[RMDB]
RNA sequence: GGGAACGACUCGAGUAGAGUCGAAAAACCAACCUUUCAUCGUUCCCUUCUUUGCAAUAACGCUGUUUUGCAAAACCGUGAUAGUGCUGAGCCGAUGAGCCUCUAAUGAAAUUAUAGACUCAUCGGCCAUUAUAAGGCCGUUCGCGGCCUUAUAAUGAAAAGAAACAACAACAACAAC
Reactivity to 2A3 in 0.01 (KOAc 150mM, MgCl2 10mM, bicine 150mM(pH8.5), 24C), signal-to-noise 2, nucleotides 027 to 126: a000c050c010a050a080c040c030u060u290u300c100a240u080c050g000u000u030c000c000c000u050u030c020u030u030u050g000c000a070a010u080a100a040c030g050c260u110g070u040u010u030u190g100c030a020a050a000a020c020c020g040u020g030a050u080a110g070u050g060c040u080g050a000g030c000c010g000a000u000g000a000g020c020c010u020c010u020a050a070u090g100a080a130a020u130u050a040u000a020g010a020c000u000c000a000u000c000g000g000c000
Reactivity to DMS in 0.01 (KOAc 150mM, MgCl2 10mM, bicine 150mM(pH8.5), 24C), signal-to-noise 6, nucleotides 027 to 126: a100c030c030a120a150c160c080u010u000u000c110a190u010c040g000u000u000c000c000c000u000u010c080u000u000u000g000c000a030a030u010a030a050c030g030c130u000g020u000u000u000u010g010c110a060a030a030a080c130c100g010u000g010a080u010a040g010u010g010c050u010g010a130g010c000c000g010a010u000g010a020g020c010c000u000c060u000a010a030u000g000a120a040a300u000u000a000u000a010g000a020c000u000c000a000u000c000g000g010c010
Structure probing data (2A3 and DMS) for a 177-nucleotide construct.
DMS adducts were read by reverse transcription with MarathonRT.
Source: RMDB library RFMREP, as collected in RNAgym.